This 207-nucleotide RNA was probed chemically with DMS. Values cover nucleotides 27 to 156. The data come from the RNA Mapping Database (RMDB), library OK3TST. The DMS profile rests on 2,338 reads. DMS adducts were read by reverse transcription with MarathonRT.
RNA sequence: GGGAACGACUCGAGUAGAGUCGAAAAUAUAAUUUAUUCGGUAACUGUUUGAAAUGAGCUGUCCUUUUGAAAUCAGUGGUAUUACCCCAUUUUAUAGAUGGGAAAACUGAGUCUCGGAGACAAAAGCAAGAGGGAGGUUCUUGCACCGGAAAGAUGAAUCACGAUUACUAUUCGUAGUAAUCGUGAUAAAAGAAACAACAACAACAAC
Reactivity to DMS in 0.01 (KOAc 150mM, MgCl2 10mM, bicine 150mM(pH8.5), 24C), signal-to-noise 1, nucleotides 027 to 156: u010a090u000a020a120u010u000u000a110u060u000c000g010g020u000a070a130c090u010g020u000u010u000g010a140a080a150u000g010a080g010c050u000g000u000c020c010u000u000u000u000g010a100a060a060u000c040a040g010u010g010g050u000a090u010u000a200c160c010c000c010a010u020u010u000u020a150u000a300g010a050u010g010g010g000a060a080a090a010c050u010g010a050g000u000c050u020c100g010g020a180g000a110c050a050a080a110a090g010c000a030a090g010a090g010g010g010a130g020g000u000u010c010u010u010g010c030a080c070c010g020g020a020a070a120g010a090u010g010a230